[RMDB]
This 177-nucleotide RNA was probed chemically with 2A3 and DMS. Conditions: 150 mM KOAc, 10 mM MgCl2 and 150 mM bicine (pH 8.5), 24 C. The DMS profile rests on 1,313 reads. For 2A3, 758 sequencing reads were counted. Source: RMDB library OK2TST, as collected in RNAgym. For DMS the reverse transcriptase was MarathonRT.

RNA sequence: GGGAACGACUCGAGUAGAGUCGAAAACUUGUUGCAUAAUGGGUAAGUCGGGCAGGUCAUCGCCGACAUAGGCAACUUGCUUCUCAUCGAGCUUUAGUUGGCUUAGUAGCUUUUUAAAAGCGAUGCACACCCUCACGUAGUUCGCUACGUGAGGGUGAAAAGAAACAACAACAACAAC
Reactivity to 2A3 in 0.01 (KOAc 150mM, MgCl2 10mM, bicine 150mM(pH8.5), 24C), signal-to-noise 1, nucleotides 027 to 126: c020u010u080g020u050u030g000c060a070u060a130a090u300g130g120g130u170a110a110g040u050c050g000g050g090c130a080g090g020u110c080a100u110c140g000c000c000g060a050c010a040u070a030g000g000c000a020a030c000u010u080g010c000u030u000c040u050c000a100u090c120g040a010g050c030u140u120u220a000g010u170u230g080g000c040u000u000a000g020u050a030g090c090u130u070u040u100u140a100a290a000a000g000c040g130a020u090g030c030a010
Reactivity to DMS in 0.01 (KOAc 150mM, MgCl2 10mM, bicine 150mM(pH8.5), 24C), signal-to-noise 2, nucleotides 027 to 126: c060u000u010g000u000u000g030c010a040u020a110a200u000g020g020g020u000a090a110g010u000c020g000g020g010c070a060g020g000u000c150a070u000c070g000c000c010g010a080c040a090u000a080g040g020c000a120a030c010u000u010g000c020u000u000c030u000c090a090u000c200g000a030g000c000u000u000u000a070g010u000u010g040g010c000u000u000a090g010u000a100g000c020u020u020u000u010u020a050a090a000a060g030c000g000a040u000g000c080a210